The record gives the reactivity of an RNA of 177 nucleotides to DMS.
The DMS profile rests on 2,123 reads.
DMS adducts were read by reverse transcription with MarathonRT.
Values cover nucleotides 27 to 126.
Conditions: 150 mM KOAc, 10 mM MgCl2 and 150 mM bicine (pH 8.5), 24 C.
RNA sequence: GGGAACGACUCGAGUAGAGUCGAAAAGAUAUGGACCCAAUCUAGCGGGAGAGCCCCAUUCGGAAACGAAUGGGGCUCAUCGAUCGCUAGAGUUGGGUCCUAAGUCAAAAGCCUUGUUCGCAAGGCAGUUAAACAACACGUUCGCGUGUUGUUUAACAAAAGAAACAACAACAACAAC
Reactivity to DMS in 0.01 (KOAc 150mM, MgCl2 10mM, bicine 150mM(pH8.5), 24C), signal-to-noise 2, nucleotides 027 to 126: g000a040u000a300u010g000g000a030c010c000c000a020a040u000c000u000a000g000c000g020g000g010a050g020a050g050c030c000c000c010a030u000u000c030g000g000a110a100a240c020g020a040a010u000g000g010g010g000c000u010c000a000u000c170g000a090u020c010g020c000u010a000g000a070g020u000u000g020g030g010u020c000c010u000a000a070g020u000c050a090a150a130a170g010c000c000u000u000g000u000u020c170g050c000a010a000g010g000c010a050